[RMDB]
RNA sequence: GGGAACGACUCGAGUAGAGUCGAAAAAGACCGAAUAUCGGGACGUUUGUACCGGUACACAUGUCAACCAAAGUCUCGGAGUCGACGGGCUACGUGCCGAACGGACAGAUGUCGGCGUUCGGGUACGCAGGUGGAUUUAGUUCGCUAAAUCCACCUGAAAAGAAACAACAACAACAAC
Reactivity to DMS in 0.01 (KOAc 150mM, MgCl2 10mM, bicine 150mM(pH8.5), 24C), signal-to-noise 4, nucleotides 027 to 126: a110g010a060c010c110g010a170a180u000a010u010c020g010g010g010a020c030g030u010u010u030g020u000a040c010c010g010g010u000a010c150a080c180a130u000g010u010c030a090a250c050c020a100a070a130g000u010c010u000c010g000g010a080g010u000c030g010a040c050g030g000g000c140u000a090c040g010u000g010c110c080g020a070a030c040g000g000a060c070a140g020a160u000g010u000c020g010g000c020g020u000u000c010g010g000g020u010a010c070g020
Reactivity to 2A3 in 0.01 (KOAc 150mM, MgCl2 10mM, bicine 150mM(pH8.5), 24C), signal-to-noise 4, nucleotides 027 to 126: a000g010a010c020c000g050a080a030u040a020u070c000g000g000g020a030c050g070u100u220u300g040u030a030c010c000g000g000u040a040c040a000c020a140u160g010u010c010a030a050c030c000a130a040a070g070u000c030u030c030g030g020a040g020u030c030g010a050c030g030g000g030c010u080a060c070g030u080g070c040c010g050a060a040c040g030g070a030c020a080g200a110u260g060u030c020g040g050c010g030u000u000c000g040g000g030u060a020c070g000

Source: RMDB library OK2TRN, as collected in RNAgym. An RNA of 177 nucleotides, treated with DMS and 2A3 and read out base by base. Reactivities are given for positions 27 through 126. The RNA was probed in 150 mM KOAc, 10 mM MgCl2 and 150 mM bicine (pH 8.5) at 24 C. For 2A3 the reverse transcriptase was SuperScript II with manganese.